[RMDB]
RNA sequence: GGGAACGACUCGAGUAGAGUCGAAAAAAGCCUUGUGGAUGUCUAGGCCAACAAAGCACCAGAUCGGACAGACUGUGAAAUAGCUGUAUGACAUUGCCAUGGCCAAGGUCAGCACCCUGAUCAGGCCUACUAUCUGGACUUUCGAGUCCAGAUAGUAAAAAGAAACAACAACAACAAC
Reactivity to DMS in 0.01 (KOAc 150mM, MgCl2 10mM, bicine 150mM(pH8.5), 24C), signal-to-noise 4, nucleotides 027 to 126: a110a100g010c010c010u000u010g030u000g000g000a040u010g030u000c050u000a130g010g010c030c050a080a100c150a050a080a110g010c050a100c070c080a030g000a080u000c050g000g020a080c130a070g010a080c040u000g020u000g000a070a080a100u020a080g020c020u010g000u000a060u010g010a050c050a040u000u000g020c020c050a100u000g000g020c020c040a070a080g010g000u000c010a020g010c140a090c260c220c010u020g000a050u000c040a210g000g000c010c020
Reactivity to 2A3 in 0.01 (KOAc 150mM, MgCl2 10mM, bicine 150mM(pH8.5), 24C), signal-to-noise 3, nucleotides 027 to 126: a000a000g050c040c010u060u030g070u070g020g030a030u020g030u000c030u050a060g030g020c030c000a090a040c030a030a130a010g040c020a020c030c010a040g030a300u060c020g020g040a020c010a040g050a090c020u020g000u020g130a040a100a110u110a040g000c010u040g050u130a170u130g020a020c000a030u020u120g050c020c020a050u050g010g000c030c030a150a110g010g000u020c000a010g030c060a140c040c070c040u010g000a020u030c010a020g010g020c000c000
Description:
The record gives the reactivity of an RNA of 177 nucleotides to DMS and 2A3. For 2A3 the reverse transcriptase was SuperScript II with manganese. The reactions ran in a buffer of 150 mM KOAc, 10 mM MgCl2 and 150 mM bicine (pH 8.5), at 24 C.